[RMDB]
RNA sequence: GGGAACGACUCGAGUAGAGUCGAAAAACCAUCCGGCGUCGAUUAAUUGCAUGCGAAAGGAUGGAUUAGCACUCGCUAUCUGCCAGCAGCACGUACGGAAACCAUCCAUUCAUAUGUCUACGUAUCAGAAUAGCAUGCGAAAGGAUGGCUACUGAGGAUAGCCAGACAGAUUCGUCUGUCUGGCUAUAAAAGAAACAACAACAACAAC
Reactivity to DMS in 0.01 (KOAc 150mM, MgCl2 10mM, bicine 150mM(pH8.5), 24C), signal-to-noise 1, nucleotides 027 to 156: a040c000c000a020u000c000c030g000g000c050g020u070c050g030a190u000u010a110a110u000u000g000c040a140u000g030c010g060a110a060a190g000g000a080u010g060g010a170u020u010a030g010c000a090c130u020c300g000c080u010a050u000c010u010g010c000c040a150g050c110a220g000c110a110c110g000u000a200c060g090g000a080a130a060c000c000a040u000c000c010a150u010u000c000a010u000a000u000g000u000c050u000a020c040g010u010a120u000c160a010g000a100a110u000a030g050c020a040u030g010c020g020a000a060a100g020g000a030u000g030g010c030u000a020c040u010g000a210g010g000
Reactivity to 2A3 in 0.01 (KOAc 150mM, MgCl2 10mM, bicine 150mM(pH8.5), 24C), signal-to-noise 2, nucleotides 027 to 156: a000c000c000a010u000c010c020g020g040c000g100u110c040g130a170u070u300a160a110u190u180g010c060a080u110g020c060g170a180a060a060g090g020a160u050g010g000a000u040u100a040g000c000a120c130u100c260g000c000u040a000u180c040u020g040c010c000a000g000c000a010g000c010a010c000g070u220a060c030g010g000a060a020a080c000c030a000u000c000c000a020u000u000c010a020u040a000u130g140u160c020u000a030c030g130u100a110u300c050a100g090a250a000u040a030g000c020a000u030g010c020g000a030a010a000g000g000a000u020g000g020c000u120a050c070u060g100a090g060g000
The data come from the RNA Mapping Database (RMDB), library OK3TST.
An RNA of 207 nucleotides, treated with DMS and 2A3 and read out base by base.
For 2A3 the reverse transcriptase was SuperScript II with manganese.
For 2A3, 524 sequencing reads were counted.